[RMDB]
RNA sequence: GGGAACGACUCGAGUAGAGUCGAAAAGACUGGGGGGAAGAAAAGCCGAAAUGGAUUCACGGUGCCUUGGAUGAAGGACGAGAGGGGAACUGCAAGCUCCUUCAACUGGUUCUGUCCGGUGAGAAGUAAUGAUAAUGUGGUUCGCCACAUUAUCAUUAAAAGAAACAACAACAACAAC
Reactivity to 2A3 in 0.01 (KOAc 150mM, MgCl2 10mM, bicine 150mM(pH8.5), 24C), signal-to-noise 6, nucleotides 027 to 126: g060a020c030u030g000g000g000g010g040g020a040a010g060a030a140a020a000g030c030c010g060a110a080a050u140g040g050a030u030u080c050a020c080g010g020u050g020c010c030u040u050g070g020a060u050g060a060a040g030g010a010c050g020a020g010a020g090g030g010g020a020a030c010u050g040c040a040a070g010c020u010c000c000u010u020c010a030a040c030u020g010g050u070u060c030u090g110u040c010c010g000g010u030g010a090g020a090a010g040u070
Reactivity to DMS in 0.01 (KOAc 150mM, MgCl2 10mM, bicine 150mM(pH8.5), 24C), signal-to-noise 8, nucleotides 027 to 126: g010a130c040u000g010g010g010g010g000g000a090a080g000a070a080a090a140g020c040c030g000a060a080a110u020g010g000a090u010u000c100a100c070g000g000u010g010c040c020u000u010g010g010a080u020g000a070a030g000g010a040c080g010a100g020a100g010g010g000g010a070a080c070u010g010c140a080a130g010c100u010c030c000u000u000c050a090a070c040u010g010g000u010u010c110u010g000u010c020c020g010g010u010g000a070g000a070a070g010u000

This 177-nucleotide RNA was probed chemically with 2A3 and DMS. As a SHAPE reagent, 2A3 marks flexible, mostly unpaired nucleotides at the ribose 2'-OH. Reactivities are rounded to 0.1 and cut off at 0 and 3. DMS adducts were read by reverse transcription with MarathonRT.